Notes: This 177-nucleotide RNA was probed chemically with DMS and 2A3. 2A3 adducts were read by reverse transcription with SuperScript II with manganese. For 2A3, 5,474 sequencing reads were counted. For DMS the reverse transcriptase was MarathonRT. For DMS, 2,579 sequencing reads were counted.
RNA sequence: GGGAACGACUCGAGUAGAGUCGAAAAGACACGACGGAGACGUCGUGUCAAGUCCAGUGCGAAAGCACUGGACAAAUAAGGGAUGUUUUUCUCGCUGACUUUCAUCCCCAACGAAAAAAUGUCAGCACAUGAAAAUGAUCUUCGGAUCAUUUUCAUGAAAAGAAACAACAACAACAAC
Reactivity to DMS in 0.01 (KOAc 150mM, MgCl2 10mM, bicine 150mM(pH8.5), 24C), signal-to-noise 2, nucleotides 027 to 126: g000a000c000a020c010g010a020c000g000g000a230g010a210c020g020u000c000g030u000g010u000c020a020a070g010u000c000c010a010g020u000g010c000g010a110a080a170g000c000a010c000u000g000g000a010c000a020a030a060u010a150a180g000g010g000a010u000g000u000u000u000u000u000c050u000c220g010c000u000g010a010c000u010u010u000c000a000u000c000c000c000c130a040a010c230g000a000a010a000a000a020a010u010g000u000c000a000g020c010a240
Reactivity to 2A3 in 0.01 (KOAc 150mM, MgCl2 10mM, bicine 150mM(pH8.5), 24C), signal-to-noise 2, nucleotides 027 to 126: g000a000c000a010c000g000a000c000g000g030a040g030a020c010g010u000c000g000u010g000u000c000a000a000g010u020c010c000a000g010u010g000c020g100a140a040a020g020c000a000c010u020g000g000a000c010a010a050a000u140a070a080g010g000g000a000u010g000u010u020u010u010u000c050u050c050g000c010u000g000a000c000u010u010u000c000a000u010c000c020c040c040a020a040c090g250a010a000a010a000a010a000u070g000u000c000a000g010c010a000